[RMDB]
RNA sequence: GGGAACGACUCGAGUAGAGUCGAAAAUGAGAAAGCAAUAUUCCAGCUGGGGAGUUGAGCACCGUAGAAGCAUGGACCAGGGAGUAUUGGAAAUGGCUAAUCUAAAGGAAAAGCCUCAACCCCCAAGAUUAUUACCUCUUUUCGAAGAGGUAAUAAUAAAAGAAACAACAACAACAAC
Reactivity to DMS in 0.01 (KOAc 150mM, MgCl2 10mM, bicine 150mM(pH8.5), 24C), signal-to-noise 8, nucleotides 027 to 126: u010g010a290g010a120a100a110g010c040a070a040u010a150u010u000c010c020a160g020c110u010g000g010g010g000a110g010u000u000g010a030g020c030a130c030c040g010u000a040g020a080a060g010c050a040u010g000g020a300c020c010a040g000g010g020a150g010u010a070u000u000g010g000a060a090a090u010g010g010c010u000a060a120u000c020u010a030a060a140g000g000a060a060a140a110g010c160c000u000c030a020a060c020c010c000c000c010a050a060g010
Reactivity to 2A3 in 0.01 (KOAc 150mM, MgCl2 10mM, bicine 150mM(pH8.5), 24C), signal-to-noise 4, nucleotides 027 to 126: u200g020a070g110a160a090a010g040c040a040a080u030a090u170u030c020c010a050g030c130u060g010g010g000g010a260g010u040u020g020a010g000c030a030c050c010g010u030a010g010a100a000g040c020a020u050g020g050a070c010c000a020g060g020g070a140g100u160a160u150u080g030g040a020a030a090u130g040g000c000u020a060a060u020c010u020a060a090a060g030g010a060a250a010a030g020c020c010u010c000a010a020c010c030c000c000c010a000a000g010
Chemical mapping of a 177-nucleotide RNA with DMS and 2A3. The reactions ran in a buffer of 150 mM KOAc, 10 mM MgCl2 and 150 mM bicine (pH 8.5), at 24 C. For DMS, 8,402 sequencing reads were counted. The 2A3 profile rests on 5,593 reads. For DMS the reverse transcriptase was MarathonRT.